[RMDB]
RNA sequence: GGGAACGACUCGAGUAGAGUCGAAAAUGAAACAGCAGCGGAACGGAGCGCCUCUGCCGCGGCAGACGCAAAAACAGCGGCGGCGGGGAGUGCGUCAACGGCAUCCACGAAGGCGACAGAGGCUGCGCCUGACGGAUAGCUUCGGCUAUCCGUCAGGAAAAGAAACAACAACAACAAC
Reactivity to DMS in 0.01 (KOAc 150mM, MgCl2 10mM, bicine 150mM(pH8.5), 24C), signal-to-noise 1, nucleotides 027 to 126: u010g010a170a050a120c070a160g020c030a000g000c070g000g000a140a050c120g010g000a180g000c000g000c030c000u000c040u020g010c000c000g020c000g000g040c070a070g000a160c040g040c100a020a050a100a080a120c220a110g010c000g050g020c010g000g000c090g000g010g020g050a040g010u000g010c000g000u000c120a110a070c100g020g030c030a130u000c000c000a110c160g000a110a080g010g000c000g000a020c030a050g000a220g020g020c000u000g020c070g000